[RMDB]
Chemical mapping of a 177-nucleotide RNA with 2A3 and DMS. It was measured as part of the RMDB library OK2TST.
RNA sequence: GGGAACGACUCGAGUAGAGUCGAAAAGAGCUCGGCGAGAAACGGAUCGAGGUGGGAGACCCGCUCGCGUAUGUCGUCUUCGAACUGCUGGGGCGAGAGGAAGGCGGUAUGCCCCGCACGGUUGCCGUGUAGGGGCACCUUUCGAGGUGCCCCUACAAAAAGAAACAACAACAACAAC
Reactivity to 2A3 in 0.01 (KOAc 150mM, MgCl2 10mM, bicine 150mM(pH8.5), 24C), signal-to-noise 1, nucleotides 027 to 126: g060a010g010c050u030c050g010g020c030g080a060g070a120a160a040c000g010g020a020u090c040g020a020g060g070u040g030g070g000a030g030a010c020c000c030g040c050u000c040g040c030g050u080a050u140g050u030c000g000u010c000u140u130c040g080a150a100c010u070g020c100u080g030g060g150g000c030g040a060g030a020g130g020a030a030g030g000c000g020g060u020a030u090g030c000c000c000c000g040c020a020c050g030g040u100u180g030c070c010g000
Reactivity to DMS in 0.01 (KOAc 150mM, MgCl2 10mM, bicine 150mM(pH8.5), 24C), signal-to-noise 2, nucleotides 027 to 126: g000a080g010c020u010c040g000g020c020g010a100g000a090a080a130c100g000g000a060u000c030g010a110g010g020u000g000g010g000a240g000a060c060c010c020g000c030u000c030g020c080g010u000a020u000g010u000c040g010u000c040u000u010c050g020a050a090c110u020g000c040u020g010g000g010g000c020g000a110g030a130g010g000a050a050g000g000c050g010g000u000a040u000g010c000c040c050c010g020c060a050c070g000g000u020u000g020c050c020g010
The reactions ran in a buffer of 150 mM KOAc, 10 mM MgCl2 and 150 mM bicine (pH 8.5), at 24 C. For DMS, 1,760 sequencing reads were counted.